Chemical mapping of a 177-nucleotide RNA with DMS and 2A3. It was measured as part of the RMDB library M2PK50. For DMS the reverse transcriptase was MarathonRT. For 2A3, 13,756 sequencing reads were counted. Conditions: 150 mM KOAc, 10 mM MgCl2 and 150 mM bicine (pH 8.5), 24 C.
[RMDB]
RNA sequence: GGGAACGACUCGAGUAGAGUCGAAAACAUUGGCAUUUCGAUGCCAAUGGGUCUGCGUCGCGCGGCCGCCGAGUCGUUCCCGCCGCCGCGUGACGCAGUUUGGGCAGCUCGAGUUCGCUCGAGCUAACGCUAUGUUACAAUUCGUUGUAACAUAGCGAAAAGAAACAACAACAACAAC
Reactivity to DMS in 0.01 (KOAc 150mM, MgCl2 10mM, bicine 150mM(pH8.5), 24C), signal-to-noise 7, nucleotides 027 to 126: c000a010u000u000g000g020c000a010u000u000u010c180g010a030u000g010c000c000a010a000u000g000g000g010u000c010u000g000c010g010u000c010g000c000g010c010g000g010c010c300g020c100c150g010a060g010u000c000g010u000u000c000c000c000g020c040c170g010c010c000g010c010g010u000g010a010c000g010c000a000g000u000u010u010g010g010g020c170a050g010c000u000c000g010a020g010u000u010c210g010c000u000c000g000a010g000c000u000a010a080
Reactivity to 2A3 in 0.01 (KOAc 150mM, MgCl2 10mM, bicine 150mM(pH8.5), 24C), signal-to-noise 4, nucleotides 027 to 126: c010a000u010u000g000g000c000a000u040u060u150c290g120a010u030g000c000c000a010a000u010g000g010g040u030c000u000g020c000g000u000c000g000c000g010c010g030g000c050c030g070c120c180g050a060g020u010c020g000u010u000c010c000c000g000c000c010g010c000c000g000c000g010u010g000a010c000g000c000a000g000u000u110u030g020g030g010c050a000g000c010u000c000g010a000g010u060u070c150g030c060u000c000g010a000g020c010u010a030a010